The record gives the reactivity of an RNA of 177 nucleotides to DMS and 2A3. Source: RMDB library RFMREP, as collected in RNAgym. Conditions: 150 mM KOAc, 10 mM MgCl2 and 150 mM bicine (pH 8.5), 24 C.

RNA sequence: GGGAACGACUCGAGUAGAGUCGAAAACCGGCUCUCACGAACAAUCCCGCCCGGAGUUUACCGUACUUGAUCUCUUGCGCGGACCUACGGGUGCCCAGAAAAAUCGGAGUGCCUUCGGGCACUCCGAGAACAUACGAGAGUUCGCUCUCGUAUGUUCAAAAGAAACAACAACAACAAC
Reactivity to DMS in 0.01 (KOAc 150mM, MgCl2 10mM, bicine 150mM(pH8.5), 24C), signal-to-noise 1, nucleotides 027 to 126: c250c010g020g000c020u010c050u000c040a300c070g000a070a090c060a080a230u000c030c190c030g000c030c040c020g030g000a000g000u000u000u000a040c050c030g020u000a060c020u000u010g020a060u000c200u000c030u000u000g000c050g000c020g000g000a100c250c020u020a050c060g020g000g020u010g000c050c000c050a100g020a030a020a030a150a210u000c000g000g000a000g010u010g000c000c000u000u020c180g010g000g000c010a000c020u010c000c010g010a000
Reactivity to 2A3 in 0.01 (KOAc 150mM, MgCl2 10mM, bicine 150mM(pH8.5), 24C), signal-to-noise 2, nucleotides 027 to 126: c080c000g000g010c000u020c010u000c000a060c020g040a070a020c040a040a040u030c000c000c000g000c000c000c000g040g010a020g010u060u160u180a150c010c000g070u020a030c010u070u090g250a300u280c220u070c030u200u050g010c010g000c030g080g020a040c000c000u010a030c010g020g020g000u060g060c000c010c010a110g190a060a130a010a000a000u050c010g000g010a010g000u010g050c000c030u000u050c100g040g000g010c030a030c000u020c000c000g000a010